Chemical mapping of a 177-nucleotide RNA with 2A3 and DMS. DMS adducts were read by reverse transcription with MarathonRT. Values cover nucleotides 27 to 126.

RNA sequence: GGGAACGACUCGAGUAGAGUCGAAAACGGUUACCUCUUGGGUAGAGUUGGCACGCGAAGGACACGCCAAGGAGCGUGAGGCACUGCGCAACCCAGGGAUUGAGCAGGAAGAGGCGUUUGCCACCACUACCCACGUAGAGUUCGCUCUACGUGGGUAAAAAGAAACAACAACAACAAC
Reactivity to 2A3 in 0.01 (KOAc 150mM, MgCl2 10mM, bicine 150mM(pH8.5), 24C), signal-to-noise 2, nucleotides 027 to 126: c020g070g000u070u060a050c000c000u110c080u110u160g060g010g000u030a030g020a030g080u050u040g010g000c010a000c020g040c010g050a120a020g140g120a040c010a010c020g000c000c060a210a280g200g040a230g000c000g000u000g000a050g040g010c040a000c040u010g000c010g010c030a010a020c000c050c050a100g170g030g010a160u020u050g000a020g000c000a000g010g030a060a040g030a060g190g050c030g010u060u070u100g030c000c000a020c010c010a030c030
Reactivity to DMS in 0.01 (KOAc 150mM, MgCl2 10mM, bicine 150mM(pH8.5), 24C), signal-to-noise 3, nucleotides 027 to 126: c080g030g010u000u000a060c070c010u000c150u000u000g020g000g060u000a030g010a090g000u010u000g000g000c040a040c040g010c000g010a120a100g000g000a170c000a010c010g020c000c000a240a110g000g000a160g020c010g030u000g020a050g040g010c040a270c010u000g000c010g010c070a020a020c020c000c110a180g000g020g000a160u000u000g020a030g010c010a050g010g000a090a190g000a120g010g000c000g010u000u020u020g040c040c000a030c010c040a120c090